[RMDB]
The record gives the reactivity of an RNA of 177 nucleotides to 2A3 and DMS. For 2A3 the reverse transcriptase was SuperScript II with manganese. The DMS profile rests on 2,619 reads. The RNA was probed in 150 mM KOAc, 10 mM MgCl2 and 150 mM bicine (pH 8.5) at 24 C. Source: RMDB library TTRDEL, as collected in RNAgym.
RNA sequence: GGGAACGACUCGAGUAGAGUCGAAAAGAUAUGGAAACUCCUCAGUGGCCUUGAAGUCGGAAACGAUGGAGCCACGAGGAGGUUUCCUAAGUCAAAACAAUAUUGAUCGUUCGCGAUCAAUAUUGAAUCUCCCAAAUAUGUUCGCAUAUUUGGGAGAAAAAGAAACAACAACAACAAC
Reactivity to 2A3 in 0.01 (KOAc 150mM, MgCl2 10mM, bicine 150mM(pH8.5), 24C), signal-to-noise 2, nucleotides 027 to 126: g020a030u080a030u140g000g040a020a020a010c000u000c010c000u020c090a180g020u000g000g010c020c060u170u100g110a060a000g010u010c010g000g090a080a060a040c000g000a010u030g040g070a030g000c010c000a000c020g020a010g010g000a000g020g000u000u010u000c000c000u000a140a020g050u000c020a010a040a060a150c000a020a000u000a000u000u010g000a010u000c000g000u070u060c280g000c010g190a000u000c000a000a000u000a000u000u010g010a010a070
Reactivity to DMS in 0.01 (KOAc 150mM, MgCl2 10mM, bicine 150mM(pH8.5), 24C), signal-to-noise 3, nucleotides 027 to 126: g000a030u000a300u010g000g000a010a010a040c000u000c000c000u000c010a060g060u000g010g020c010c300u010u000g000a120a170g000u000c000g020g000a140a090a160c010g000a000u000g000g010a040g020c000c000a000c000g000a010g000g000a000g010g000u000u030u000c000c010u000a030a110g000u000c030a100a110a130a180c010a000a000u000a000u000u000g000a000u000c000g000u010u020c250g010c010g010a000u000c000a010a000u000a000u000u000g000a080a120